[RMDB]
RNA sequence: GGGAACGACUCGAGUAGAGUCGAAAAAAUGAGAAGUGUAUUCAUUCAUUCAUAGGAUGACUGAUUUUAAGAUUAUGUUAGAAGGCUUCGUAGUUAUCCCUUACUGCCUAAUGAACUGCCUCAAAUGCGUAAAGUGCAGAUUCGUCUGCACUUUACGAAAAGAAACAACAACAACAAC
Reactivity to DMS in 0.01 (KOAc 150mM, MgCl2 10mM, bicine 150mM(pH8.5), 24C), signal-to-noise 3, nucleotides 027 to 126: a060a040u010g000a140g000a130a040g010u010g020u010a050u000u000c000a050u010u000c020a030u000u000c060a130u010a110g010g010a060u000g010a030c050u000g000a030u000u000u000u000a070a100g010a130u010u010a050u010g000u000u010a070g010a130a060g010g000c030u010u000c080g010u020a100g000u030u000a080u010c040c010c020u000u010a070c090u000g000c030c050u020a040a060u010g000a050a030c080u000g010c050c020u010c080a040a060a070u000g000
Reactivity to 2A3 in 0.01 (KOAc 150mM, MgCl2 10mM, bicine 150mM(pH8.5), 24C), signal-to-noise 2, nucleotides 027 to 126: a000a010u240g020a050g010a080a010g030u010g070u200a150u040u060c020a020u020u010c010a010u090u000c030a060u130a130g130g000a000u080g020a020c030u030g060a070u070u070u110u120a070a100g020a060u100u110a100u200g120u070u050a060g010a160a010g110g030c010u030u060c030g030u000a000g040u040u070a070u060c000c000c000u010u030a030c030u020g000c020c040u030a030a000u030g080a080a030c040u010g010c060c000u000c000a060a120a080u130g040
The data come from the RNA Mapping Database (RMDB), library OK2TST.
Structure probing data (DMS and 2A3) for a 177-nucleotide construct.
High DMS reactivity at an A or C suggests that its Watson-Crick edge is free.
DMS adducts were read by reverse transcription with MarathonRT.
The DMS profile rests on 2,702 reads.
Conditions: 150 mM KOAc, 10 mM MgCl2 and 150 mM bicine (pH 8.5), 24 C.
Values cover nucleotides 27 to 126.